[RMDB]
RNA sequence: GGGAACGACUCGAGUAGAGUCGAAAAGGAUUUUUCUUCGGAAAAAUCCAAACCCGAUGAAGCGGCACUUAGACAGCUUCAAACACCUAAGAGUGCAAAUAAAAACCGUUCAGUUCGCUGAACGGAACUUCAGAAUAUUCUUCGGAAUAUUCUGAAGAAAAGAAACAACAACAACAAC
Reactivity to 2A3 in 0.01 (KOAc 150mM, MgCl2 10mM, bicine 150mM(pH8.5), 24C), signal-to-noise 2, nucleotides 027 to 126: g010g000a000u000u020u030u030u020c050u110u130c200g000g000a000a000a000a000a000u020c000c010a020a030a070c000c000c000g020a100u050g010a020a010g010c050g030g000c050a000c060u040u010a030g050a130c040a020g000c000u000u000c000a030a050a000c070a030c020c050u110a150a020g100a030g040u050g020c030a060a150a050u190a070a080a000a030a030c000c000g010u020u000c000a000g000u040u080c170g000c060u010g010a000a000c000g010g010a000a010
Reactivity to DMS in 0.01 (KOAc 150mM, MgCl2 10mM, bicine 150mM(pH8.5), 24C), signal-to-noise 1, nucleotides 027 to 126: g000g000a000u000u000u010u000u000c000u000u010c240g000g000a000a000a020a030a000u020c000c000a000a080a070c000c010c000g000a110u010g000a050a070g040c030g010g010c000a060c050u030u030a110g000a110c110a140g000c010u030u000c060a020a060a060c120a090c180c100u010a140a150g010a020g000u000g040c050a110a070a090u010a000a040a140a150a070c000c000g000u000u000c000a010g000u000u020c250g050c000u000g000a010a000c000g000g010a000a010